Structure probing data (2A3) for a 207-nucleotide construct. Source: RMDB library RNAMAK, as collected in RNAgym. For 2A3 the reverse transcriptase was SuperScript II with manganese. The reactions ran in a buffer of 150 mM KOAc, 10 mM MgCl2 and 150 mM bicine (pH 8.5), at 24 C.
RNA sequence: GGGAACGACUCGAGUAGAGUCGAAAAGGGGUCCCUGCAAUGACGGCUUACGGAGCUUUGAUCUGUGGCUGAAGCCUCCACGGCCACAGGGAGCUCGUAAGCUAAGACAGCAGGGACGGAGGCACCCAAAACAAAUCGUUGUUCGCAACGAUUUGAAGAACUUACGCCUGUUCGCAGGCGUAAGUUCAAAAGAAACAACAACAACAAC
Reactivity to 2A3 in 0.01 (KOAc 150mM, MgCl2 10mM, bicine 150mM(pH8.5), 24C), signal-to-noise 1, nucleotides 027 to 156: g030g000g070g040u010c000c000c000u000g010c010a170a300u160g020a090c050g010g070c000u040u000a060c100g300g000a060g020c000u300u300u000g030a000u010c000u000g000u040g010g040c000u060g050a120a000g000c000c000u000c000c000a010c000g030g000c010c010a020c010a000g000g000g010a000g000c000u000c000g030u000a000a000g000c000u000a000a020g050a030c020a010g000c010a010g000g000g000a000c010g000g000a000g010g050c010a040c000c000c030a060a120a040a010c000a000a000a000u000c030g000u000u010g020u050u070c300g000c170a000a000c000g020a000u000u000u000g010a030a050